[RMDB]
RNA sequence: GGGAACGACUCGAGUAGAGUCGAAAAACUAUACGAACGGCUCGAUCUUGACUGAGAAGAACCUCGACCUUGCCAAUGACCAAAGCGUGUUCGGUAUCGCUGAGAUCAUGGAUGGCUUGAACGCUGCGCGUAUCGACAUCAACUCGCAGGUGCAAGAUCCAAAGUUAUUCUUCGGAAUAACUUUGGAAAAAGAAACAACAACAACAAC
Reactivity to 2A3 in 0.01 (KOAc 150mM, MgCl2 10mM, bicine 150mM(pH8.5), 24C), signal-to-noise 7, nucleotides 027 to 156: a000c080u110a080u100a200c090g060a130a010c030g020g010c030u020c020g070a170u050c030u060u100g070a100c090u140g010a010g020a100a000g020a030a030c000c010u020c030g070a090c020c020u050u050g030c010c020a080a130u050g010a020c010c010a070a030a010g020c020g010u040g050u130u140c090g130g040u150a050u110c020g000c030u040g030a030g000a080u030c010a020u050g080g040a050u050g010g000c000u020u060g040a050a020c050g020c130u040g000c010g000c020g020u050a060u120c060g070a070c050a120u110c060a040a030c020u000c030g000c030a020g020g030u040g010c020a030a010g010a070
Reactivity to DMS in 0.01 (KOAc 150mM, MgCl2 10mM, bicine 150mM(pH8.5), 24C), signal-to-noise 4, nucleotides 027 to 156: a100c080u000a140u010a090c050g030a080a130c040g020g050c010u000c030g010a080u010c020u010u010g010a120c080u000g000a110g010a140a190g010a080a120c050c030u000c030g010a100c030c020u000u000g030c010c010a090a110u000g020a060c040c020a040a140a070g010c010g040u010g000u000u000c140g030g030u000a060u000c020g030c010u000g000a300g000a010u000c010a060u010g000g010a110u000g010g010c000u000u000g010a060a070c050g020c020u000g020c060g030c070g000u010a150u000c020g000a090c030a070u010c040a060a100c060u000c020g010c050a050g000g010u000g000c030a060a080g000a210
Chemical mapping of a 207-nucleotide RNA with 2A3 and DMS. The RNA was probed in 150 mM KOAc, 10 mM MgCl2 and 150 mM bicine (pH 8.5) at 24 C. Values cover nucleotides 27 to 156. It was measured as part of the RMDB library OK3TST.